[RMDB]
RNA sequence: GGGAACGACUCGAGUAGAGUCGAAAAGAUAUGGAUCCCAAGCGAUAAGAUCCUAUCGGAAACGAUAGAAGAUCUUUUGACGCUUGAUGAUCCUAAGUCAAAAGGCUCACAGUUCGCUGUGAGCCAAGAAGGCGAAUAUGUUCGCAUAUUCGCCUUCAAAAGAAACAACAACAACAAC
Reactivity to DMS in 0.01 (KOAc 150mM, MgCl2 10mM, bicine 150mM(pH8.5), 24C), signal-to-noise 2, nucleotides 027 to 126: g000a000u000a060u010g000g010a000u000c000c260c000a010a000g010c000g020a150u000a060a030g010a020u010c000c000u000a000u010c000g000g000a010a010a030c000g000a000u000a010g000a120a140g010a000u000c000u000u000u010u020g020a170c040g010c000u010u000g000a030u000g000a010u000c000c000u000a000a070g000u010c010a090a110a100a140g000g000c000u000c000a010c000a020g010u000u010c260g000c010u000g000u010g000a010g010c000c000a000a010
Reactivity to 2A3 in 0.01 (KOAc 150mM, MgCl2 10mM, bicine 150mM(pH8.5), 24C), signal-to-noise 2, nucleotides 027 to 126: g000a000u020a020u060g010g000a000u000c000c000c030a000a000g020c020g140a190u100a300a080g010a010u000c000c010u000a000u000c020g010g030a010a000a010c010g000a010u000a010g080a150a090g010a010u020c020u010u000u010u190g220a030c000g000c000u020u000g000a020u080g000a000u040c020c000u000a030a000g010u000c010a020a000a010a250g000g040c000u020c000a010c000a000g020u100u120c220g060c130u000g020u020g000a000g000c000c000a000a010
An RNA of 177 nucleotides, treated with DMS and 2A3 and read out base by base. For DMS the reverse transcriptase was MarathonRT. Conditions: 150 mM KOAc, 10 mM MgCl2 and 150 mM bicine (pH 8.5), 24 C. Source: RMDB library TTRDEL, as collected in RNAgym.